RNA sequence: GGGAACGACUCGAGUAGAGUCGAAAACUCACUCACUACGGUGAGUGAGAAUCUUAAGGCUCAAUAAAGCUUGCCUUGAGGUCCCUCAAGCAGAUAUAGACUGAAACAUUUAGUAUUGCCAAGCAGGGAGCAACGGCUCGAGUACGCUCGAGCCGAACAUUAAUCCACCCUUCGGGGUGGAUUAAUGAAAAGAAACAACAACAACAAC
Reactivity to 2A3 in 0.01 (KOAc 150mM, MgCl2 10mM, bicine 150mM(pH8.5), 24C), signal-to-noise 1, nucleotides 027 to 156: c000u000c000a000c000u030c000a000c010u030a030c300g080g010u000g000a010g010u010g000a000g000a050a010u010c000u010u030a010a000g010g000c000u000c060a150a090u180a260a130a100g090c100u120u080g030c030c000u000u000g010a000g000g000u000c010c020c000u020c050a010a060g000c030a010g110a030u090a020u080a210g040a060c030u050g060a050a090a050c050a050u130u130u100a050g030u040a070u110u060g010c010c000a010a060g000c060a100g110g080g020a070g070c010a080a040c000g000g040c000u030c010g020a020g010u040a030c180g050c090u010c010g000a010g020c000c000g000a000a000